[RMDB]
RNA sequence: GGGAACGACUCGAGUAGAGUCGAAAAGCGUACUACGCAUUCGGGUAGUAGGGAGUGCCUGAGGCGCUCGUCCCAAAUAGGACGAGCGACCGCGGGCACGAAGAACUACUAUCUCUAGCGUGAUGCGUAUCGCAAAAGAGACACUUCGGUGUCUCAAGAUUCGUUGAGAGUUCGCUCUCAACGAAUCAAAAGAAACAACAACAACAAC
Reactivity to 2A3 in 0.01 (KOAc 150mM, MgCl2 10mM, bicine 150mM(pH8.5), 24C), signal-to-noise 2, nucleotides 027 to 156: g020c010g020u080a100c030u010a020c030g000c000a010u040u050c030g010g000g020u000a000g000u000a010g010g010g010a050g000u000g020c000c000u010g000a030g000g000c010g000c000u010c000g010u030c000c000c030a240a210a020u300a020g000g000a010c010g000a000g010c020g030a200c000c000g000c020g010g000g000c010a000c000g010a020a010g000a000a000c000u000a010c000u010a020u010c070u050c040u100a040g090c030g150u160g030a000u010g000c000g000u010a030u300c000g000c020a000a020a040a080g000a000g000a000c000a000c010u020u130c300g090g000u000g000u000c000u000c000a000a010

Background
Source: RMDB library RNAMAK, as collected in RNAgym. Structure probing data (2A3) for a 207-nucleotide construct. 2A3 adducts were read by reverse transcription with SuperScript II with manganese. Conditions: 150 mM KOAc, 10 mM MgCl2 and 150 mM bicine (pH 8.5), 24 C.